[RMDB]
RNA sequence: GGGAACGACUCGAGUAGAGUCGAAAAGCCGUGCUCGUGAGGGAGCAGAAAAUGCAGAGCUAUCCCGUCGUUUCGCUAAACAAAUGCGAAACGACAAAUUGCGUUACAUACGCAAUCCUCUAAUGAAACCAUCGACUCGAUUCGUCGAGUCGAUGGUAAAAGAAACAACAACAACAAC
Reactivity to DMS in 0.01 (KOAc 150mM, MgCl2 10mM, bicine 150mM(pH8.5), 24C), signal-to-noise 1, nucleotides 027 to 126: g020c030c060g000u010g020c000u000c010g000u020g000a090g020g000g000a050g050c000a100g000a030a080a080a250u050g000c140a220g060a140g000c020u000a090u000c000c050c000g000u000c000g020u000u000u000c000g030c000u030a030a130a170c300a140a070a030u010g000c000g000a000a000a010c000g000a010c000a010a010a020u000u010g000c010g030u000u000a090c300a120u000a060c020g020c000a020a010u000c010c010u000c020u020a120a130u000g010a170a080
Reactivity to 2A3 in 0.01 (KOAc 150mM, MgCl2 10mM, bicine 150mM(pH8.5), 24C), signal-to-noise 1, nucleotides 027 to 126: g020c000c000g130u050g010c020u020c030g050u030g040a040g040g130g000a000g050c000a010g080a010a200a000a010u240g050c040a010g070a050g090c010u010a010u040c000c010c010g010u010c000g000u000u000u000c000g010c000u000a000a240a120c090a020a180a060u070g030c000g000a000a000a000c010g020a010c000a020a170a000u000u000g000c000g020u030u120a180c090a100u300a030c030g020c000a000a020u000c010c000u040c000u060a120a180u160g160a160a050